[RMDB]
RNA sequence: GGGAACGACUCGAGUAGAGUCGAAAAGAUAUGGAGUGUGGCUAAGGGAGGUCGUUCGGAAACGAACGUCCUUUGAUCUUAGAAUCACUCCUAAGUCAAAAUCAGGUGUGGUUCGCCACACCUGAAAGAAUAUUAUUACCUUCGGGUAAUAAUAUUCAAAAGAAACAACAACAACAAC
Reactivity to 2A3 in 0.01 (KOAc 150mM, MgCl2 10mM, bicine 150mM(pH8.5), 24C), signal-to-noise 4, nucleotides 027 to 126: g010a020u050a030u100g000g000a020g010u020g000u110g080g130c020u010a000a010g080g040g010a010g010g000u000c000g000u010u000c010g000g020a050a040a020c010g000a000a000c000g010u020c010c020u050u080u040g100a150u080c010u000u000a010g020a060a060u060c000a000c000u000c010c000u010a070a020g010u010c040a020a020a020a300u050c000a000g000g000u000g000u000g010g060u050u110c220g080c100c000a000c000a000c010c000u000g000a000a010a000
Reactivity to DMS in 0.01 (KOAc 150mM, MgCl2 10mM, bicine 150mM(pH8.5), 24C), signal-to-noise 5, nucleotides 027 to 126: g010a040u000a290u000g000g000a020g020u000g010u000g000g020c010u000a020a010g020g010g010a000g020g020u000c000g020u000u000c000g010g000a090a050a120c000g000a010a010c000g000u000c000c000u000u000u000g010a070u010c000u010u000a010g000a100a060u000c000a000c000u000c000c010u000a020a070g000u000c020a100a080a130a150u010c000a010g000g010u000g030u000g010g000u000u010c260g010c000c000a000c000a010c000c000u000g000a000a040a060

Conditions: 150 mM KOAc, 10 mM MgCl2 and 150 mM bicine (pH 8.5), 24 C. This 177-nucleotide RNA was probed chemically with 2A3 and DMS. For DMS, 8,688 sequencing reads were counted. Reactivities are given for positions 27 through 126. It was measured as part of the RMDB library TTRDEL. For 2A3, 14,427 sequencing reads were counted. DMS adducts were read by reverse transcription with MarathonRT. 2A3 adducts were read by reverse transcription with SuperScript II with manganese.